This 177-nucleotide RNA was probed chemically with 2A3 and DMS.
For DMS, 903 sequencing reads were counted.
For DMS the reverse transcriptase was MarathonRT.
For 2A3 the reverse transcriptase was SuperScript II with manganese.
Reactivities are rounded to 0.1 and cut off at 0 and 3.
The data come from the RNA Mapping Database (RMDB), library RFM100.
RNA sequence: GGGAACGACUCGAGUAGAGUCGAAAACCAGCUCCCCACUUCACCGGAGACCGAGCCCUGCAUGCAGAGGAAGGGCCCCAGCUCCACAGACUGCCAAAGUCGACAGGGUGCCUCCUCACCAAAAAUGCUGAAGGCCCUCAUUCGUGAGGGCCUUCAGAAAAGAAACAACAACAACAAC
Reactivity to 2A3 in 0.01 (KOAc 150mM, MgCl2 10mM, bicine 150mM(pH8.5), 24C), signal-to-noise 1, nucleotides 027 to 126: c040c000a060g020c040u030c010c000c000c000a010c000u080u050c030a040c010c130g000g040a040g050a080c020c020g000a000g030c040c000c000u000g070c010a050u060g040c000a000g030a010g030g010a070a150g000g030g020c010c000c000c000a020g010c060u040c110c030a020c000a030g010a000c000u010g040c040c080a190a140a000g040u020c020g020a030c060a150g050g000g000u020g080c020c000u000c000c000u040c000a030c000c000a000a160a060a000a000u110g040
Reactivity to DMS in 0.01 (KOAc 150mM, MgCl2 10mM, bicine 150mM(pH8.5), 24C), signal-to-noise 1, nucleotides 027 to 126: c000c000a100g000c100u000c080c080c000c040a170c050u000u000c020a050c130c000g000g000a090g000a060c030c090g000a240g000c010c010c000u000g120c080a000u000g000c090a110g020a080g000g000a110a130g000g000g050c080c000c050c020a130g000c060u000c060c200a040c230a180g000a000c010u000g050c110c090a000a120a000g010u000c060g000a140c300a200g000g000g000u050g000c000c000u000c000c000u000c050a130c110c010a030a010a020a100a010u060g000